An RNA of 177 nucleotides, treated with DMS and 2A3 and read out base by base. DMS adducts were read by reverse transcription with MarathonRT.
RNA sequence: GGGAACGACUCGAGUAGAGUCGAAAACCGCACUUCUUCGGAAGUGCGGAAAUACCGAGAUUGUACCUCGGUAGAAGUACAUAACCCUUGGAAAGAAGGGAAAAAGCGUGAGCUUCGGCUCACGCAAGGAUAAUUAAAGCUUCGGCUUUAAUUAUCCAAAAGAAACAACAACAACAAC
Reactivity to DMS in 0.01 (KOAc 150mM, MgCl2 10mM, bicine 150mM(pH8.5), 24C), signal-to-noise 3, nucleotides 027 to 126: c000c000g000c010a010c000u000u000c000u000u040c220g020g000a020a000g010u000g010c000g010g000a010a030a090u010a050c010c000g020a020g010a100u000u010g010u000a210c060c010u000c000g010g020u010a010g000a080a090g000u000a090c160a050u000a080a110c000c000c020u000u010g010g020a130a120a200g010a030a000g000g000g000a020a030a080a110a070g000c000g020u000g000a030g010c000u000u000c190g010g000c000u000c000a000c000g040c000a010a010
Reactivity to 2A3 in 0.01 (KOAc 150mM, MgCl2 10mM, bicine 150mM(pH8.5), 24C), signal-to-noise 3, nucleotides 027 to 126: c000c000g000c000a000c010u010u010c010u040u050c070g100g000a000a000g000u000g000c010g000g010a030a000a010u010a000c000c010g000a000g000a030u120u210g050u180a060c000c010u000c010g030g010u010a010g020a040a020g050u080a040c020a080u180a110a130c000c000c000u000u030g100g250a130a120a120g040a000a080g040g000g000a090a080a010a010a000g000c000g000u000g020a000g000c010u050u070c280g050g000c000u010c000a000c000g010c000a000a000